The data come from the RNA Mapping Database (RMDB), libraries RFM100 and RFMREP. This 177-nucleotide RNA was probed chemically with DMS and 2A3. 2A3 adducts were read by reverse transcription with SuperScript II with manganese. The reactions ran in a buffer of 150 mM KOAc, 10 mM MgCl2 and 150 mM bicine (pH 8.5), at 24 C.

RNA sequence: GGGAACGACUCGAGUAGAGUCGAAAAGAAAGAAAGAAAUUAGAAAUAACGUGUUGUGAUAGUUGUCUUAUUCUCCUGCUUUUAAUACCGAGAAUAAGUCCAUUGUUGCACCAUGUUAUUUCCACAAAUUUUACACGUCGUUCGCGACGUGUAAAAUAAAAGAAACAACAACAACAAC
Reactivity to DMS in 0.01 (KOAc 150mM, MgCl2 10mM, bicine 150mM(pH8.5), 24C), signal-to-noise 2, nucleotides 027 to 126: g000a110a200a030g000a160a110a110g020a040a140a110u060u040a190g000a010a000a000u000a000a000c000g040u000g000u000u000g030u000g030a000u000a020g010u000u020g000u000c000u000u000a000u010u000c000u040c000c190u000g000c190u020u020u030u080a070a130u030a080c170c300g010a000g020a010a000u000a000a040g020u000c040c010a040u000u000g020u000u000g000c000a000c000c020a000u000g010u000u000a000u000u000u020c000c070a090c300a050a090
Reactivity to 2A3 in 0.01 (KOAc 150mM, MgCl2 10mM, bicine 150mM(pH8.5), 24C), signal-to-noise 4, nucleotides 027 to 126: g090a000a030a000g090a010a100a020g100a040a160a050u230u170a110g010a010a020a000u010a000a000c000g000u000g000u010u000g000u000g020a000u000a010g010u000u010g000u010c000u000u000a000u000u020c000u010c030c030u110g140c060u180u190u050u050a120a150u190a200c030c050g010a010g000a010a000u000a010a010g010u000c000c010a000u000u010g010u010u010g000c010a000c000c000a000u000g000u000u000a010u010u000u010c020c000a050c030a010a140